[RMDB]
RNA sequence: GGGAACGACUCGAGUAGAGUCGAAAAUUGACAUGUUAGCUGUCAAAACAGGCGUUGCUAUUGAACAGCUGCUUUAUGCGAUCCAACAACUGUAUACUGGGUUCCAGGGAAAGCAAAUCCUUGGCAGGGGCUUCAGGCUUCGGCCUGAAGAAAAGAAACAACAACAACAAC
Reactivity to 2A3 in 0.01 (KOAc 150mM, MgCl2 10mM, bicine 150mM(pH8.5), 24C), signal-to-noise 5, nucleotides 027 to 129: u140u060g010a000c020a020u040g000u040u150a050g020c000u000g010u000c000a000a000a050a020c040a030g030g090c120g200u150u160g020c030u040a030u100u050g060a080a010c000a020g000c000u040g010c030u090u140u060a060u120g040c030g030a020u030c010c010a050a020c040a030a070c100u050g030u100a090u050a130c090u050g000g130g010u050u030c000c020a010g000g010g040a050a040a030g030c050a030a030a080u040c010c000u000u000g000g010c000a000g030g000g020g000
Reactivity to DMS in 0.01 (KOAc 150mM, MgCl2 10mM, bicine 150mM(pH8.5), 24C), signal-to-noise 8, nucleotides 027 to 129: u060u030g020a100c080a040u020g040u020u050a090g040c080u020g040u010c000a060a020a110a120c180a080g010g000c100g010u010u020g060c080u020a160u040u050g000a070a070c000a070g020c040u000g000c080u020u030u030a030u060g050c080g030a080u020c050c010a110a090c110a070a110c080u040g000u030a070u060a140c120u030g010g010g040u080u040c040c030a000g030g000g020a040a050a120g020c120a060a080a100u020c000c040u020u010g000g030c100a090g060g000g010g030
Chemical mapping of a 170-nucleotide RNA with 2A3 and DMS. Source: RMDB library 15KLIB, as collected in RNAgym. For DMS the reverse transcriptase was MarathonRT. For DMS, 18,002 sequencing reads were counted. Conditions: 150 mM KOAc, 10 mM MgCl2 and 150 mM bicine (pH 8.5), 24 C.